Structure probing data (2A3 and DMS) for a 177-nucleotide construct.
DMS adducts were read by reverse transcription with MarathonRT.
RNA sequence: GGGAACGACUCGAGUAGAGUCGAAAAUUAUCCAUAGCUGUCUUGAUUGCUCUAUCCUGUAUUUGUCGUAUCUUUACUAAAUAUAUCGGAUAACGUUAAAUGUGUAAUGAUUAGGACUUUAGGACAAUGCAGGAUAUUAUUUCGAUAAUAUCCUGCAAAAAGAAACAACAACAACAAC
Reactivity to 2A3 in 0.01 (KOAc 150mM, MgCl2 10mM, bicine 150mM(pH8.5), 24C), signal-to-noise 6, nucleotides 027 to 126: u110u040a040u060c030c020a070u090a030g040c060u040g050u030c020u020u080g080a100u060u140g000c020u000c000u040a050u020c000c010u030g030u070a070u050u070u080g040u020c010g030u030a030u040c040u020u140u080a090c030u070a040a080a100u190a020u040a050u100c030g060g000a050u030a160a070c010g050u040u050a030a090a080u100g010u020g060u130a030a100u090g060a050u010u110a030g080g020a010c000u040u040u050a040g030g000a000c010a020a020
Reactivity to DMS in 0.01 (KOAc 150mM, MgCl2 10mM, bicine 150mM(pH8.5), 24C), signal-to-noise 4, nucleotides 027 to 126: u020u040a100u000c010c010a100u030a110g030c050u000g000u000c040u000u000g010a080u020u010g000c050u010c020u010a100u010c010c010u000g020u020a030u010u010u010g000u010c030g010u000a030u000c020u000u010u000a050c020u010a050a040a060u010a090u010a040u000c060g010g000a090u030a050a060c020g010u010u010a030a110a030u020g010u020g000u010a020a050u020g000a030u000u010a070g010g010a040c080u000u010u010a030g010g000a050c230a050a150
Record summary:
2A3 is a SHAPE reagent: it acylates the 2'-hydroxyl of flexible nucleotides of all four kinds. Source: RMDB library OK1LIB, as collected in RNAgym.